[RMDB]
RNA sequence: GGGAACGACUCGAGUAGAGUCGAAAAGAUAGAUAGUACUCGUAAAAACUCUCUUUCGCAGGCCGCGUAUUUUGAGAGACGAAGCCGUGAAGUAGCGAAAGCUACGACGAAGCGCGUGCUCGGCCGAUGCGCGAACAGCAUCAGGUACGAGUACGAAAUGCGGGCUAAUAUUCGUAUUAGCCCGCAUAAAAGAAACAACAACAACAAC
Reactivity to 2A3 in 0.01 (KOAc 150mM, MgCl2 10mM, bicine 150mM(pH8.5), 24C), signal-to-noise 1, nucleotides 027 to 156: g100a030u270a000g010a070u090a040g030u030a090c010u010c030g030u080a040a040a040a130a160c020u000c010u000c000u000u000u070c040g000c140a080g110g070c090c090g000c040g000u060a080u020u200u140u110g010a010g010a000g070a050c060g060a120a040g010c000c010g020u030g080a120a010g000u000a000g000c010g030a000a030a060g000c010u000a000c030g040a000c050g100a150a020g100c000g010c000g040u070g000c000u000c010g000g000c010c010g010a010u000g030c020g000c030g080a070a040c040a040g000c000a020u000c070a030g030g000u050a070c000g050a000g010u000a000c010g000a010a090